[RMDB]
RNA sequence: GGGAACGACUCGAGUAGAGUCGAAAAAUCCCCCGGUCCCUCUCACGUCCAGCCCCUCCCCGUGUCUAGUGAAGGGAGACUCCGGGACUCCUUGCAUGCUGGGGACGAAGCCGCCCCCGGGCGCUCCUACCCGAGAGGUUCGCCUCUCGGAAAAGAAACAACAACAACAAC
Reactivity to 2A3 in 0.01 (KOAc 150mM, MgCl2 10mM, bicine 150mM(pH8.5), 24C), signal-to-noise 7, nucleotides 027 to 129: a000u030c000c000c000c000c000g010g010u000c000c000c000u000c020u030c010a030c020g130u020c030c000a010g000c010c000c000c000u030c000c000c010c000g060u050g070u010c060u060a090g030u060g140a080a060g020g010g010a010g010a030c030u020c020c010g000g000g040a030c010u020c010c000u030u060g070c050a070u140g030c020u050g000g000g000g010a010c030g050a060a010g050c050c020g020c020c030c010c000c010g010g000g020c010g010c010u010c000c010u010a050c010
Reactivity to DMS in 0.01 (KOAc 150mM, MgCl2 10mM, bicine 150mM(pH8.5), 24C), signal-to-noise 6, nucleotides 027 to 129: a110u000c000c000c020c080c070g000g070u050c030c020c010u010c010u050c050a070c090g040u010c020c020a100g000c000c010c040c000u000c030c020c010c010g000u040g030u030c050u040a110g020u000g030a100a060g020g030g030a050g020a060c060u010c050c060g020g010g020a160c000u000c000c000u000u050g040c070a060u020g040c020u000g000g000g000g000a070c070g030a120a110g000c000c010g040c020c030c010c040c000g050g020g010c090g030c070u040c000c000u000a170c110